[RMDB]
RNA sequence: GGGAACGACUCGAGUAGAGUCGAAAAGAGGGCUUGGCUGAUCUUAAUGAGGCCAGGUGCGACGCGGGGGCAACAGCCCGGCCUCAGCGAGGUCCCCUCGGGAGGUGCCUUCCGCGUCACGGAGUGCCAGUUUUACUAGUUUCGACUAGUAAAACUGAAAAGAAACAACAACAACAAC
Reactivity to 2A3 in 0.01 (KOAc 150mM, MgCl2 10mM, bicine 150mM(pH8.5), 24C), signal-to-noise 9, nucleotides 027 to 126: g160a050g030g110g000c010u020u010g000g010c010u040g080a140u050c030u130u300a220a140u300g030a030g000g000c000c000a000g010g000u020g030c050g000a000c000g000c000g000g000g000g000g000c020a150a040c010a160g050c000c000c000g000g000c000c000u030c020a110g220c060g040a010g000g020u230c100c100c000c020u030c000g000g010g000a010g000g010u040g000c000c000u200u160c010c000g000c000g000u000c000a000c010g050g030a090g020u070g070c020
Reactivity to DMS in 0.01 (KOAc 150mM, MgCl2 10mM, bicine 150mM(pH8.5), 24C), signal-to-noise 9, nucleotides 027 to 126: g010a120g020g000g000c020u000u000g000g010c000u000g000a140u010c160u030u040a110a110u010g000a300g010g010c000c000a010g000g010u010g010c070g000a010c000g010c010g000g010g000g000g000c000a100a070c110a110g000c010c000c000g010g000c010c010u000c010a090g020c110g010a020g000g000u020c050c070c050c030u000c030g000g000g010a040g010g000u000g000c000c010u000u020c010c000g010c000g010u000c010a030c110g010g000a120g010u010g010c100
This 177-nucleotide RNA was probed chemically with 2A3 and DMS. For 2A3 the reverse transcriptase was SuperScript II with manganese. It was measured as part of the RMDB libraries RFM100 and RFMREP. For DMS the reverse transcriptase was MarathonRT.